Chemical mapping of a 177-nucleotide RNA with DMS and 2A3. The RNA was probed in 150 mM KOAc, 10 mM MgCl2 and 150 mM bicine (pH 8.5) at 24 C.

[RMDB]
RNA sequence: GGGAACGACUCGAGUAGAGUCGAAAAGAUAUGGAACUCGGUAAUACGACAUGGGAUAUUAUCGGAAACGAUAAUAAUCCCAACAGCGUGCCAGAGUUCCUAAGUCAAACAUGCGUUCGCGCAUGAAGACGAUAUUUAAGUUCGCUUAAAUAUCGUCAAAAGAAACAACAACAACAAC
Reactivity to DMS in 0.01 (KOAc 150mM, MgCl2 10mM, bicine 150mM(pH8.5), 24C), signal-to-noise 6, nucleotides 027 to 126: g000a020u000a170u010g000g000a010a010c000u000c010g010g010u000a140a100u010a160c020g010a100c110a150u000g020g000g010a030u000a010u000u000a000u000c000g000g000a040a040a100c000g010a000u000a000a010u000a030a120u000c000c000c000a020a040c150a130g010c020g000u000g000c010c010a150g020a010g000u000u010c000c000u000a010a070g000u000c020a110a100a210c000a000u000g000c000g020u000u010c190g010c020g010c000a000u000g010a100a130
Reactivity to 2A3 in 0.01 (KOAc 150mM, MgCl2 10mM, bicine 150mM(pH8.5), 24C), signal-to-noise 7, nucleotides 027 to 126: g010a010u020a020u070g000g010a010a010c010u010c000g000g040u140a250a120u270a300c080g070a060c180a300u300g000g000g010a000u000a000u010u000a000u010c000g000g000a030a010a000c010g000a010u000a010a000u030a030a170u000c000c000c000a010a000c000a000g010c010g010u020g000c020c070a140g010a000g010u010u000c000c000u000a010a000g010u000c010a050a060a090c010a010u020g010c000g030u050u080c300g000c000g000c120a000u010g010a030a030
For 2A3 the reverse transcriptase was SuperScript II with manganese.